[RMDB]
RNA sequence: GGGAACGACUCGAGUAGAGUCGAAAACAUCAACAACAUUGGAUUUGCCCGAUCCAUUAGGACCAACAAUACCAGUCAUUGAAUGGGUAAAAUCAAUUGUGAUUUCAUCAGCAUAUGAUUUAAAACCCAGUAUCGACUGGUUCGCCAGUCGAUACUGAAAAGAAACAACAACAACAAC
Reactivity to DMS in 0.01 (KOAc 150mM, MgCl2 10mM, bicine 150mM(pH8.5), 24C), signal-to-noise 2, nucleotides 027 to 126: c090a130u000c100a080a040c100a040a070c150a110u080u000g010g000a060u000u000u000g010c020c070c070g010a070u010c000c010a140u000u000a100g030g000a070c070c010a100a040c180a070a040u000a080c080c020a060g040u010c060a020u000u000g020a110a180u000g000g010g000u010a100a020a030a010u000c000a040a300u020u020g060u000g000a120u010u000u000c170a070u000c120a100g000c020a010u000a140u000g000a030u010u010u010a040a080a080a080c060c030
Reactivity to 2A3 in 0.01 (KOAc 150mM, MgCl2 10mM, bicine 150mM(pH8.5), 24C), signal-to-noise 1, nucleotides 027 to 126: c020a040u150c080a000a040c000a030a000c010a080u000u080g040g000a010u010u010u120g020c020c010c010g020a010u000c010c010a020u040u070a060g060g030a010c000c080a030a090c050a080a030u100a090c030c000a030g080u070c040a140u050u130g090a090a070u070g000g000g000u010a030a040a000a010u020c010a020a050u030u090g050u000g090a080u040u140u080c030a070u000c010a020g040c040a020u070a040u150g050a030u100u060u100a050a080a010a010c030c060
Chemical mapping of a 177-nucleotide RNA with DMS and 2A3.
The RNA was probed in 150 mM KOAc, 10 mM MgCl2 and 150 mM bicine (pH 8.5) at 24 C.
DMS adducts were read by reverse transcription with MarathonRT.